[RMDB]
RNA sequence: GGGAACGACUCGAGUAGAGUCGAAAAGCCAUGAGCCAGGCCAAGUGGUUCGCCACCAUUUUCGCAGCACUGAAUUCGGCUCUGGUGGAGGCGUUCACCGACCAGGUGGACAACCUGGUACUACCCAGGUAAAUUACGGGUUCGCCCGUAAUUUACCAAAAGAAACAACAACAACAAC
Reactivity to DMS in 0.01 (KOAc 150mM, MgCl2 10mM, bicine 150mM(pH8.5), 24C), signal-to-noise 3, nucleotides 027 to 126: g040c050c060a010u000g010a040g080c010c050a100g000g000c020c160a050a080g020u000g000g000u000u000c250g000c140c160a150c030c040a030u000u000u000u010c190g010c030a120g000c080a090c070u000g000a130a140u000u000c050g000g020c000u000c000u000g000g010u000g000g010a010g000g010c030g020u000u000c010a070c020c020g010a040c020c010a030g000g000u000g000g040a130c170a080a030c000c000u000g000g010u020a070c130u000a110c100c030c050a090
Reactivity to 2A3 in 0.01 (KOAc 150mM, MgCl2 10mM, bicine 150mM(pH8.5), 24C), signal-to-noise 2, nucleotides 027 to 126: g030c020c010a100u180g030a020g020c040c070a030g060g000c010c020a060a030g040u000g040g050u040u050c080g030c040c030a030c000c010a050u060u050u130u210c100g000c070a080g040c050a050c150u080g070a140a190u070u080c030g010g000c000u010c000u060g070g070u040g050g030a010g010g000c030g030u030u030c090a100c170c000g000a020c010c000a020g000g030u070g080g000a090c050a000a030c010c000u000g010g000u000a020c010u050a020c030c040c020a000